[RMDB]
RNA sequence: GGGAACGACUCGAGUAGAGUCGAAAAGUCAAGAUGUGUAGGAUAGGUGGGACGCUUUGAAGUGUGGACGCCAGUCUGCAUGGAGCCGACCUUGAAAUACCACCCUUUAAUGGAAAAACAAAGUGAACACUGAUUACGUGUUCGCACGUAAUCAGUGAAAAGAAACAACAACAACAAC
Reactivity to 2A3 in 0.01 (KOAc 150mM, MgCl2 10mM, bicine 150mM(pH8.5), 24C), signal-to-noise 1, nucleotides 027 to 126: g100u050c020a000a020g050a170u100g140u070g000u120a000g000g040a080u020a010g000g040u030g030g100g000a020c030g020c000u200u050u160g080a060a000g000u010g030u020g000g010a000c030g090c120c000a010g010u000c000u010g000c000a020u020g000g070a040g000c030c010g010a040c000c000u010u020g020a010a000a000u010a010c010c030a030c020c010c040u050u160u140a170a150u130g040g110a110a160a070a010a060c110a030a160a060g150u150g110a100a000
Reactivity to DMS in 0.01 (KOAc 150mM, MgCl2 10mM, bicine 150mM(pH8.5), 24C), signal-to-noise 3, nucleotides 027 to 126: g010u000c130a050a100g000a100u000g000u020g040u000a010g000g010a120u000a020g000g010u000g000g020g000a190c250g010c070u010u010u020g020a080a150g010u000g040u010g040g000a020c010g000c220c190a090g000u000c010u020g010c010a020u000g010g020a100g000c000c010g020a090c010c000u010u000g010a150a100a070u000a050c010c030a040c030c020c030u020u000u000a110a120u020g040g000a040a050a060a080a080c170a050a100a130g010u000g030a030a080
The record gives the reactivity of an RNA of 177 nucleotides to 2A3 and DMS. The 2A3 profile rests on 1,184 reads. High DMS reactivity at an A or C suggests that its Watson-Crick edge is free. For DMS, 1,591 sequencing reads were counted. Values cover nucleotides 27 to 126.